The data come from the RNA Mapping Database (RMDB), library OK3TST. Chemical mapping of a 207-nucleotide RNA with DMS and 2A3. High 2A3 reactivity points to a flexible backbone, as in loops and unpaired stretches. The reactions ran in a buffer of 150 mM KOAc, 10 mM MgCl2 and 150 mM bicine (pH 8.5), at 24 C. 2A3 adducts were read by reverse transcription with SuperScript II with manganese. For 2A3, 1,700 sequencing reads were counted.

[RMDB]
RNA sequence: GGGAACGACUCGAGUAGAGUCGAAAAGAAAUUGGCAAAUAGUACAAAUUAGGGCUCCCUCACCCCUACUUGGGCAUAGAGCUGGUACACUAGCACACCUCUGGUUAUACAUGCAUGCGUGUGCCACCAGAACAGAACACCUAACAGCAGGCACGUAAUUAAUACCCGUGUUCGCACGGGUAUUAAUAAAAGAAACAACAACAACAAC
Reactivity to DMS in 0.01 (KOAc 150mM, MgCl2 10mM, bicine 150mM(pH8.5), 24C), signal-to-noise 2, nucleotides 027 to 156: g020a050a100a120u000u000g010g000c030a050a080a070u000a130g050u000a110c050a080a070a130u000u000a050g010g020g020c010u010c020c010c000u000c020a120c070c010c010c030u000a060c100u000u010g020g020g020c020a110u010a110g010a130g000c010u000g040g020u000a090c030a070c030u000a170g040c020a100c020a070c030c050u000c020u000g030g020u010u000a150u000a040c010a050u000g010c050a050u000g030c070g060u010g010u010g000c030c040a060c020c030a040g000a100a110c090a110g010a090a090c070a040c060c030u000a040a020c070a080g000c030a050g010g020c020a030c060g000u010a070
Reactivity to 2A3 in 0.01 (KOAc 150mM, MgCl2 10mM, bicine 150mM(pH8.5), 24C), signal-to-noise 2, nucleotides 027 to 156: g020a010a050a010u100u070g010g000c060a000a030a090u100a110g050u080a050c030a070a070a060u120u090a100g000g040g000c000u050c010c000c020u030c030a060c000c020c010c000u010a070c050u070u070g030g010g000c040a060u070a140g030a040g030c050u000g000g040u020a020c020a030c070u090a050g000c020a000c000a030c030c010u000c020u050g040g000u090u060a080u040a160c030a030u100g080c030a030u070g050c020g020u010g010u020g020c000c000a010c000c010a000g000a000a030c020a050g080a050a000c020a030c030c040u060a070a020c010a000g080c010a000g030g000c030a010c060g040u070a080